[RMDB]
RNA sequence: GGGAACGACUCGAGUAGAGUCGAAAAGAUAUGGAUCCAAUGUGGGAGCUCGCUCGGAAACGAGGCGAGCGAGGAUCACGAUGGAUCCUAAGUCAAACAAUCGCUCCCGUUCGCGGGAGCGAUUGAACCUACAAUGUUAGUUCGCUAACAUUGUAGGAAAAGAAACAACAACAACAAC
Reactivity to 2A3 in 0.01 (KOAc 150mM, MgCl2 10mM, bicine 150mM(pH8.5), 24C), signal-to-noise 4, nucleotides 027 to 126: g030a020u080a040u180g000g000a000u020c000c010a040a100u190g010u020g000g080g040a080g060c000u000c010g000c000u020c010g020g040a090a100a070c040g030a050g300g190c010g010a000g020c000g000a010g000g020a060u050c000a010c010g060a060u050g000g000a000u010c000c000u000a080a010g040u030c040a140a040a100c000a010a030u010c000g000c010u010c040c020c010g000u060u050c290g010c000g060g000g000a010g000c010g010a000u000u000g000a000a000
Reactivity to DMS in 0.01 (KOAc 150mM, MgCl2 10mM, bicine 150mM(pH8.5), 24C), signal-to-noise 4, nucleotides 027 to 126: g010a040u010a300u000g000g000a000u000c000c000a010a160u010g010u010g010g000g000a100g010c000u000c000g000c000u000c000g000g000a090a060a160c040g010a040g010g020c000g010a010g020c000g000a020g020g010a100u010c000a010c000g010a130u000g000g010a020u000c000c000u000a020a080g000u000c020a130a120a220c000a000a010u000c000g000c000u000c000c010c000g030u000u010c190g000c010g000g000g000a010g010c000g010a000u000u000g000a070a170
An RNA of 177 nucleotides, treated with 2A3 and DMS and read out base by base. The data come from the RNA Mapping Database (RMDB), library TTRDEL. For DMS, 6,278 sequencing reads were counted.